[RMDB]
RNA sequence: GGGAACGACUCGAGUAGAGUCGAAAAAGGCUGACUGUGGGAUGAGGCUGCUUCCAGCCUCCUGGGUACCCCGAGAGUGUGCUGGCAGUCAAGGAGUCUGACCUCUAAACCCCUGCUAGGGGACCAGUAGAUUAAAGAGGUUCGCCUCUUUAAUCUAAAAAGAAACAACAACAACAAC
Reactivity to 2A3 in 0.01 (KOAc 150mM, MgCl2 10mM, bicine 150mM(pH8.5), 24C), signal-to-noise 2, nucleotides 027 to 126: a000g020g030c020u020g000a040c030u050g030u150g160g100g110a140u130g060a060g040g000c010u010g020c000u200u070c090c000a010g010c000c000u020c000c000u070g000g000g070u180a170c070c070c030c020g070a060g000a030g120u060g000u080g040c020u030g050g000c010a020g010u050c080a030a040g060g030a020g000u000c020u050g080a150c020c010u030c010u070a130a240a210c010c010c000c020u060g180c060u230a080g000g000g010g010a000c000c030a030g090
Reactivity to DMS in 0.01 (KOAc 150mM, MgCl2 10mM, bicine 150mM(pH8.5), 24C), signal-to-noise 5, nucleotides 027 to 126: a040g010g000c030u000g010a040c030u000g010u010g010g010g020a110u010g000a100g010g020c010u000g000c170u010u000c140c030a080g000c010c010u010c010c040u000g010g000g010u010a130c140c040c020c030g010a110g010a060g010u000g010u000g000c030u000g020g010c040a020g000u010c050a110a150g010g000a050g010u000c030u010g000a230c030c010u000c060u010a080a120a160c030c000c010c030u010g020c180u010a080g030g010g010g000a030c060c060a120g000
An RNA of 177 nucleotides, treated with 2A3 and DMS and read out base by base. Conditions: 150 mM KOAc, 10 mM MgCl2 and 150 mM bicine (pH 8.5), 24 C. The 2A3 profile rests on 1,689 reads.